[RMDB]
RNA sequence: GGGAACGACUCGAGUAGAGUCGAAAAAAGAGCUAGGUAGACAUCACCGAUGAAUGGGGCUGUUCAAGCCCUGUUGAUGUAGCAGCAUAUGUUUGGGGCACCCCAGGAUAUGGCAGAUGGACAAGCAAAGUGCCCUUGGUGGCAGCCAGAGGAGAUACGAAAAUAAAUCGUUCGCGAUUUAUUUUCGAAAAGAAACAACAACAACAAC
Reactivity to DMS in 0.01 (KOAc 150mM, MgCl2 10mM, bicine 150mM(pH8.5), 24C), signal-to-noise 2, nucleotides 027 to 156: a050a050g020a110g020c040u010a060g000g010u010a150g010a100c030a040u000c020a130c040c010g020a080u010g000a080a040u000g000g020g010g000c030u000g020u010u010c230a080a060g010c000c030c010u000g000u000u000g020a090u010g020u000a080g000c030a100g010c050a110u000a050u000g010u000u000u000g000g000g000g010c050a120c090c010c030c030a130g020g000a100u010a030u010g020g020c000a100g020a120u000g000g000a080c060a040a110g000c050a040a050a090g010u000g010c020c010c030u000u010g010g010u000g020g010c030a100g000c000c000a050g000a090g000g020a060g000a100u000a110
Reactivity to 2A3 in 0.01 (KOAc 150mM, MgCl2 10mM, bicine 150mM(pH8.5), 24C), signal-to-noise 3, nucleotides 027 to 156: a000a000g070a000g000c080u050a020g010g080u020a020g040a080c010a020u050c020a020c070c050g060a080u110g040a030a050u080g010g010g000g000c020u060g050u290u300c120a070a000g000c000c000c000u000g010u010u040g000a020u040g020u040a030g040c030a010g000c010a010u030a020u150g130u050u060u030g000g010g020g020c040a080c000c020c000c000a010g000g040a060u080a050u160g030g000c010a000g020a070u060g040g020a020c020a060a000g040c000a080a110a020g030u030g010c030c000c000u020u060g010g000u050g040g000c020a000g040c000c020a020g020a030g020g030a040g050a020u170a090